[RMDB]
RNA sequence: GGGAACGACUCGAGUAGAGUCGAAAACUCCAAUCCUCUAGCUCAGAUAUUCAGAAUGAAGUGAUUUCCCAUGCAUUGGAUUAUUUGAAUCACGAGGAAGAAGGGCUAAUGAACUUCUUAGGGAACACCAGCUAAUAGUCUUCGGACUAUUAGCUGGAAAAGAAACAACAACAACAAC
Reactivity to DMS in 0.01 (KOAc 150mM, MgCl2 10mM, bicine 150mM(pH8.5), 24C), signal-to-noise 3, nucleotides 027 to 126: c060u000c030c050a090a110u000c020c000u000c020u010a240g030c120u000c000a020g000a030u000a050u000u000c000a050g000a070a030u000g010a060a060g000u050g020a120u000u000u000c020c020c020a190u030g010c030a030u010u010g000g010a030u000u050a020u010u000u000g000a010a000u020c060a110c180g000a020g010g000a010a050g000a030a050g010g010g010c080u060a060a250u080g010a050a040c020u000u000c030u010u000a030g000g020g010a100a100c240a260
Reactivity to 2A3 in 0.01 (KOAc 150mM, MgCl2 10mM, bicine 150mM(pH8.5), 24C), signal-to-noise 5, nucleotides 027 to 126: c020u030c000c000a030a130u030c020c000u000c020u040a040g040c020u020c030a020g030a050u030a060u080u020c010a040g130a200a160u140g080a250a050g070u040g080a150u050u080u110c040c010c000a020u130g020c030a050u030u070g030g020a020u050u060a030u030u180u060g070a040a040u050c020a040c090g010a020g020g050a010a030g040a000a020g080g020g000c090u110a100a170u230g030a040a040c010u040u040c020u060u100a080g050g010g010a050a030c060a020
The record gives the reactivity of an RNA of 177 nucleotides to DMS and 2A3. The data come from the RNA Mapping Database (RMDB), library OK1LIB. The DMS profile rests on 3,730 reads. Conditions: 150 mM KOAc, 10 mM MgCl2 and 150 mM bicine (pH 8.5), 24 C. For 2A3, 3,122 sequencing reads were counted.